[RMDB]
RNA sequence: GGGAACGACUCGAGUAGAGUCGAAAAUGACAGGCAGAGCUCCCUGUUGAGCCACAGAGAUUUAGAGAAUGGCUGUUAACACAGCAUAAUCCAGCCCAUCCUGACUAAUCUGAUAUUAACAUGUAUACACAAUUCAGAUGUUCGCAUCUGAAUUGUGAAAAGAAACAACAACAACAAC
Reactivity to 2A3 in 0.01 (KOAc 150mM, MgCl2 10mM, bicine 150mM(pH8.5), 24C), signal-to-noise 2, nucleotides 027 to 126: u080g000a000c000a030g020g040c000a040g020a020g270c000u080c040c000c010u040g080u030u090g060a020g020c020c000a020c010a010g100a020g000a070u100u120u210a080g010a020g020a100a060u070g060g000c000u000g060u040u080a140a030c090a000c010a040g040c030a050u080a040a020u040c000c000a000g030c030c060c000a010u030c010c000u000g040a080c000u040a030a110u000c020u060g030a030u090a060u260u110a040a020c050a110u140g090u130a100u100a060
Reactivity to DMS in 0.01 (KOAc 150mM, MgCl2 10mM, bicine 150mM(pH8.5), 24C), signal-to-noise 2, nucleotides 027 to 126: u010g000a080c040a040g000g000c110a140g010a110g010c050u000c060c020c010u000g000u000u000g000a110g000c060c060a110c090a090g020a070g010a080u010u010u000a080g000a130g000a070a090u010g000g010c030u000g000u010u000a060a140c240a100c060a020g000c030a100u000a090a050u010c050c030a060g000c020c010c020a070u000c020c000u000g010a130c120u000a080a090u010c070u000g000a120u000a050u010u010a000a070c090a060u000g030u020a090u000a190